The record gives the reactivity of an RNA of 177 nucleotides to 2A3 and DMS. Reactivities are rounded to 0.1 and cut off at 0 and 3. For DMS, 1,038 sequencing reads were counted. DMS adducts were read by reverse transcription with MarathonRT. High DMS reactivity at an A or C suggests that its Watson-Crick edge is free. The RNA was probed in 150 mM KOAc, 10 mM MgCl2 and 150 mM bicine (pH 8.5) at 24 C.

RNA sequence: GGGAACGACUCGAGUAGAGUCGAAAAUCGGUGGGGUUCGCCCCACCGAAAAGAGAGAAGUGAGAGAGUCGUCAGUGAACGAAAGUGCGAUCCCACGCGACAAAAGAUGCGGCUUCGGCCGCAUCAAGUUCUCUUAGGUGUUCGCACCUAAGAGAACAAAAGAAACAACAACAACAAC
Reactivity to 2A3 in 0.01 (KOAc 150mM, MgCl2 10mM, bicine 150mM(pH8.5), 24C), signal-to-noise 1, nucleotides 027 to 126: u010c000g000g000u000g010g010g010g030u040u040c060g080c000c020c010c000a010c000c010g000a000a010a010a000g060a000g000a000g020a150a040g070u130g050a100g040a000g030a020g050u030c030g000u000c070a070g080u060g240a080a040c020g040a080a070a030g110u130g060c020g010a020u040c000c010c020a020c020g020c010g020a020c040a000a170a010a000g000a020u000g010c000g020g030c000u040u060c290g060g000c030c020g000c000a010u000c000a000a000
Reactivity to DMS in 0.01 (KOAc 150mM, MgCl2 10mM, bicine 150mM(pH8.5), 24C), signal-to-noise 2, nucleotides 027 to 126: u000c000g020g020u010g000g010g010g030u000u000c250g000c010c000c000c000a030c000c000g000a010a000a070a080g010a200g010a060g000a070a140g030u000g000a060g040a250g020a070g000u000c030g020u000c120a100g020u010g020a070a080c060g020a080a080a060g010u020g000c010g000a120u000c000c000c000a200c150g000c050g000a060c150a080a080a150a090g000a010u000g010c010g000g000c000u010u000c210g010g000c010c000g010c010a000u000c000a010a060